[RMDB]
RNA sequence: GGGAACGACUCGAGUAGAGUCGAAAACCAGGACCUAUCAAGUUUGGAGUCAUCCGGCCCGUAGGGGAGAAUAGAACACCGGGGGGUGAUCCACCAGGAGAAGGAGCGGAGAACCCACCUCCAGAGGCAGCCGACAUGUUCGCAUGUCGGAAAAGAAACAACAACAACAAC
Reactivity to 2A3 in 0.01 (KOAc 150mM, MgCl2 10mM, bicine 150mM(pH8.5), 24C), signal-to-noise 8, nucleotides 027 to 129: c000c000a040g030g080a040c010c030u110a090u180c070a120a090g060u070u120u080g060g010a040g020u060c020a080u000c020c010g040g000c000c000c020g090u130a100g010g020g030g000a050g020a050a070u180a070g060a080a010c030a030c060c010g010g000g000g020g000g000u010g010a020u000c010c010a020c020c020a060g040g060a070g040a080a040g040g010a020g090c060g010g000a040g010a040a010c020c010c000a040c010c000u010c010c010a020g010a030g050g020c010a000g040
Reactivity to DMS in 0.01 (KOAc 150mM, MgCl2 10mM, bicine 150mM(pH8.5), 24C), signal-to-noise 6, nucleotides 027 to 129: c000c000a080g000g000a120c040c050u000a000u050c030a140a070g030u040u030u030g000g010a060g000u030c100a050u020c050c020g030g010c050c010c020g020u050a090g040g040g000g010a050g000a100a080u030a080g010a060a030c090a040c040c010g040g020g040g120g000g010u030g030a000u040c020c040a060c030c020a120g010g010a010g040a080a080g000g000a080g000c080g050g020a040g000a110a070c000c000c060a120c020c020u010c020c040a030g030a060g020g040c090a100g010
The record gives the reactivity of an RNA of 170 nucleotides to 2A3 and DMS. For 2A3, 19,385 sequencing reads were counted. DMS (dimethyl sulfate) methylates the pairing face of unpaired adenines and cytosines. The RNA was probed in 150 mM KOAc, 10 mM MgCl2 and 150 mM bicine (pH 8.5) at 24 C. For DMS, 19,540 sequencing reads were counted.